[RMDB]
RNA sequence: GGGAACGACUCGAGUAGAGUCGAAAAUCGGAUGGGAAGAGUAUAUCCUACGGGAAUCCCCCGGUCCCUCUCACGUCCAGCCCCUCCCCGUGUCUAGUGAAGGGAGACUCCGGGACUCCUUGCAUGCGCUAUAUAACUUCUUCGGAAGUUAUAUAGCAAAAGAAACAACAACAACAAC
Reactivity to 2A3 in 0.01 (KOAc 150mM, MgCl2 10mM, bicine 150mM(pH8.5), 24C), signal-to-noise 1, nucleotides 027 to 126: u110c050g030g050a040u080g040g000g030a100a110g060a070g300u130a060u050a040u210c010c020u040a060c100g060g020g030a000a060u120c020c010c000c000c010g030g000u020c030c000c010u000c010u010c010a080c020g040u040c040c080a130g020c060c000c020c000u030c000c050c020c040g030u050g030u050c070u070a090g000u040g060a010a010g000g000g000a010g020a010c000u000c040c010g010g040g010a040c000u000c000c020u000u030g060c040a030u100g020c070
Reactivity to DMS in 0.01 (KOAc 150mM, MgCl2 10mM, bicine 150mM(pH8.5), 24C), signal-to-noise 5, nucleotides 027 to 126: u010c070g010g010a090u000g000g010g020a080a080g010a100g020u010a100u010a080u000c020c030u000a090c080g020g010g010a070a120u010c080c050c010c010c050g010g000u000c030c030c000u000c050u000c010a040c040g010u010c070c080a160g010c020c000c000c020u000c000c010c010c030g000u000g010u000c110u010a120g020u000g000a060a040g010g010g000a030g000a070c030u010c060c110g000g000g000a100c040u000c010c010u000u000g010c060a040u000g010c190